[RMDB]
RNA sequence: GGGAACGACUCGAGUAGAGUCGAAAACUGGGGUGGAUCAGCUAAACUUUUACAGGAUCGCGCUUUUCGUCCCGCCCGCUGGGCUGUAAAGCGUUAAAUCAAUAAGCGGUUCUAAGCAUGUAGAGCUGACGGCGGAGUACUGACGGACGGGGGUUCACUAAUAUGUAGUCUUCGGACUACAUAUUAGAAAAGAAACAACAACAACAAC
Reactivity to DMS in 0.01 (KOAc 150mM, MgCl2 10mM, bicine 150mM(pH8.5), 24C), signal-to-noise 2, nucleotides 027 to 156: c090u010g020g010g020g000u020g000g020a090u010c030a060g030c020u000a050a100a070c020u000u000u010u010a090c060a120g010g010a050u000c040g050c000g030c040u020u000u000u000c100g010u010c000c010c030g040c080c070c060g010c070u010g020g010g000c010u010g030u000a020a040a040g030c050g020u000u000a060a040a120u010c050a060a090u000a070a090g020c030g040g030u000u010c060u000a090a130g000c080a050u010g040u000a050g000a140g010c040u020g000a070c110g030g010c060g020g010a190g030u000a090c040u020g000a070c060g020g020a060c050g000g010g000g020g000u010u000c060a120
Reactivity to 2A3 in 0.01 (KOAc 150mM, MgCl2 10mM, bicine 150mM(pH8.5), 24C), signal-to-noise 3, nucleotides 027 to 156: c090u050g000g010g030g000u050g030g020a080u030c010a000g050c040u080a070a080a230c090u060u140u180u180a090c070a080g030g000a010u010c020g000c010g020c010u050u010u020u070c020g040u100c010c010c010g050c020c010c010g040c110u110g000g030g000c030u070g020u100a010a010a010g010c000g010u070u110a040a080a060u110c050a020a080u110a180a020g020c020g020g000u040u050c010u120a070a050g070c030a030u110g050u090a050g030a010g120c040u050g020a020c010g040g030c030g010g020a050g030u110a070c090u050g070a020c020g030g000a000c030g000g020g000g000g000u080u100c030a010

Notes
Chemical mapping of a 207-nucleotide RNA with DMS and 2A3. The RNA was probed in 150 mM KOAc, 10 mM MgCl2 and 150 mM bicine (pH 8.5) at 24 C.